[RMDB]
RNA sequence: GGGAACGACUCGAGUAGAGUCGAAAAGAGCGUGGGGAGAUUGAGGUUCUGAGCUGGUCUUCUAGGUGGGAGUCUGCGUGGUCUAAGUUUGGAGAGGCGGUUAAGGCUUUGGGCAAGAUUGAGGGCGCAGGCUCCGCAAAUUCGUUUGCGGAGCCUGAAAAGAAACAACAACAACAAC
Reactivity to 2A3 in 0.01 (KOAc 150mM, MgCl2 10mM, bicine 150mM(pH8.5), 24C), signal-to-noise 1, nucleotides 027 to 126: g010a000g000c010g000u090g000g020g110g010a070g000a040u040u220g140a080g000g000u060u140c020u020g130a090g030c000u000g060g020u000c040u060u020c010u050a060g040g050u010g000g070g000a100g000u000c080u010g010c030g020u010g000g020u000c000u070a150a140g050u070u120u070g060g060a110g010a000g010g000c020g070g040u110u020a040a030g080g000c000u000u080u040g000g000g000c010a030a120g000a040u000u130g070a030g060g010g010c130g030
Reactivity to DMS in 0.01 (KOAc 150mM, MgCl2 10mM, bicine 150mM(pH8.5), 24C), signal-to-noise 1, nucleotides 027 to 126: g030a100g010c090g020u030g000g000g010g000a020g000a040u000u000g000a040g000g010u030u000c020u000g000a080g040c060u000g000g000u010c070u010u030c070u010a110g040g040u030g050g000g010a030g000u000c090u010g010c020g010u010g030g000u000c040u020a150a090g020u000u000u000g000g030a220g000a120g010g000c030g010g000u000u010a110a120g000g040c070u000u030u000g000g000g040c100a050a080g000a040u000u000g000a140g010g030g000c030g030
The data come from the RNA Mapping Database (RMDB), library OK1LIB. Chemical mapping of a 177-nucleotide RNA with 2A3 and DMS. For DMS, 1,686 sequencing reads were counted. For 2A3, 493 sequencing reads were counted. For 2A3 the reverse transcriptase was SuperScript II with manganese.